Chemical mapping of a 207-nucleotide RNA with DMS and 2A3. The reactions ran in a buffer of 150 mM KOAc, 10 mM MgCl2 and 150 mM bicine (pH 8.5), at 24 C. For 2A3, 3,694 sequencing reads were counted. The data come from the RNA Mapping Database (RMDB), library M2RFPK. For DMS the reverse transcriptase was MarathonRT.

RNA sequence: GGGAACGACUCGAGUAGAGUCGAAAACUCCCCUCAAAAUCGUUUCAGUCCAAAAUUCAUUCGGCGGCCCUGUCAUGAGGCCGAAACGAAGGCACGUACCCCUUCGAAUGGCGUCGGGGAGUCAGCGAAAGCACUGACCCUUUCGAGGGUCAGUGAAUACUAAGCUAAUGUUCGCAUUAGCUUAGUAAAAAGAAACAACAACAACAAC
Reactivity to DMS in 0.01 (KOAc 150mM, MgCl2 10mM, bicine 150mM(pH8.5), 24C), signal-to-noise 3, nucleotides 027 to 156: c010u000c000c000c010c050u010c070a070a090a100a080u000c030g000u000u000u000c040a140g000u000c050c010a060a100a090a180u010u000c050a130u010u000c070g010g020c020g030g000c010c020c000u000g050u000c150a110u000g010a070g010g030c010c000g020a010a020a110c020g010a050a020g020g000c070a140c110g020u010a100c070c040c000c020u000u000c030g010a060a120u000g010g020c040g020u000c100g010g020g030g030a050g010u010c010a070g010c040g010a090a110a130g000c010a010c000u000g000a010c010c000c000u000u000u000c260g030a060g000g000g000u000c000a000g030u000g020a050a120
Reactivity to 2A3 in 0.01 (KOAc 150mM, MgCl2 10mM, bicine 150mM(pH8.5), 24C), signal-to-noise 5, nucleotides 027 to 156: c000u010c000c030c000c000u060c030a170a180a120a170u110c060g060u070u130u110c090a100g070u070c070c000a060a070a160a230u170u210c090a150u150u070c070g050g000c000g000g020c040c010c010u080g030u080c030a090u100g010a020g050g010c010c000g020a010a000a000c000g000a010a000g010g020c100a030c180g150u180a090c030c020c000c000u000u010c020g030a050a040u070g040g000c050g040u050c040g000g000g000g010a020g010u030c020a000g030c010g100a100a050a020g070c000a000c000u000g000a000c000c000c000u010u040u060c150g100a020g000g000g000u000c000a020g000u000g000a000a000